[RMDB]
RNA sequence: GGGAACGACUCGAGUAGAGUCGAAAAUCAGAAUCAGGCCGGAGUGUUUAGCGCUCCGUAAACACGGUCGUACAUCCAGCCGGUAGCCUGGUUCCUUGCAGUGAGUGAUGUACGGAGUUUAUAGAGCAAAAGAAAGACCUGUUCGCAGGUCUUUCAAUCAUUGGAAGAAGUUCGCUUCUUCCAAUGAAAAAGAAACAACAACAACAAC
Reactivity to DMS in 0.01 (KOAc 150mM, MgCl2 10mM, bicine 150mM(pH8.5), 24C), signal-to-noise 1, nucleotides 027 to 156: u010c050a070g010a070a010u000c000a000g000g030c010c040g010g000a090g000u000g020u000u000u020a170g010c110g000c010u020c000c000g010u000a000a070a060c050a110c060g040g020u010c040g030u000a030c020a020u000c000c010a190g030c030c040g040g020u000a070g010c040c000u010g010g010u000u000c000c020u010u010g010c080a190g030u010g010a170g020u000g000a000u000g010u000a020c010g010g020a110g000u000u010u000a100u000a090g020a130g040c040a080a070a060a210g000a010a030a030g010a010c000c000u000g010u000u010c260g000c010a010g000g020u000c000u020u000u000c010a040a100
Reactivity to 2A3 in 0.01 (KOAc 150mM, MgCl2 10mM, bicine 150mM(pH8.5), 24C), signal-to-noise 3, nucleotides 027 to 156: u090c000a010g010a000a000u000c000a000g000g000c000c000g020g020a000g020u030g020u080u180u300a180g090c030g020c020u000c000c000g000u020a010a020a020c160a020c080g060g030u050c020g000u030a010c010a020u020c020c020a020g030c020c000g020g060u040a010g000c000c010u000g000g000u000u010c020c010u040u180g010c040a120g020u130g140a090g020u110g010a030u010g020u030a020c040g030g010a060g010u140u180u030a120u070a060g130a040g070c080a070a070a120a030g000a000a000a000g000a010c000c000u010g020u050u100c260g000c090a000g040g010u020c010u000u010u010c000a000a000
This 207-nucleotide RNA was probed chemically with DMS and 2A3.
The RNA was probed in 150 mM KOAc, 10 mM MgCl2 and 150 mM bicine (pH 8.5) at 24 C.
For DMS, 3,461 sequencing reads were counted.
2A3 adducts were read by reverse transcription with SuperScript II with manganese.